[RMDB]
RNA sequence: GGGAACGACUCGAGUAGAGUCGAAAAGAUAUGGAGUGGUCCACGGCACGCUAUGAAGUCGGAAACGAUGGAGCGUGCGUGGAGCCACUCCUAAGUCAAAACCAAGCUCCCUUCGGGGAGCUUGGAAGAUAGGUCAAAACUUCGGUUUUGACCUAUCAAAAGAAACAACAACAACAAC
Reactivity to 2A3 in 0.01 (KOAc 150mM, MgCl2 10mM, bicine 150mM(pH8.5), 24C), signal-to-noise 2, nucleotides 027 to 126: g000a020u090a040u140g000g000a000g000u000g000g010u000c000c000a010c020g300g040c080a010c010g030c000u110a300u300g060a030a000g010u010c010g020g050a070a040a030c000g000a010u010g030g050a010g000c000g010u010g010c000g000u010g000g020a000g020c000c000a000c000u000c000c000u000a010a000g020u010c010a030a020a020a040c000c000a010a010g040c020u000c010c000c000u040u110c270g050g000g000g000a000g000c000u000u000g000g000a000a000
Reactivity to DMS in 0.01 (KOAc 150mM, MgCl2 10mM, bicine 150mM(pH8.5), 24C), signal-to-noise 2, nucleotides 027 to 126: g010a030u030a300u000g000g000a010g020u000g000g010u000c000c000a020c020g040g060c000a000c000g040c010u010a180u040g000a070a210g020u000c000g000g000a130a060a160c010g000a010u000g000g010a020g030c000g010u020g000c000g010u000g010g000a060g010c000c000a010c000u010c000c000u000a000a070g000u010c040a080a050a180a170c010c000a010a000g000c000u000c000c000c000u000u020c280g000g010g040g000a000g010c000u000u000g020g000a020a040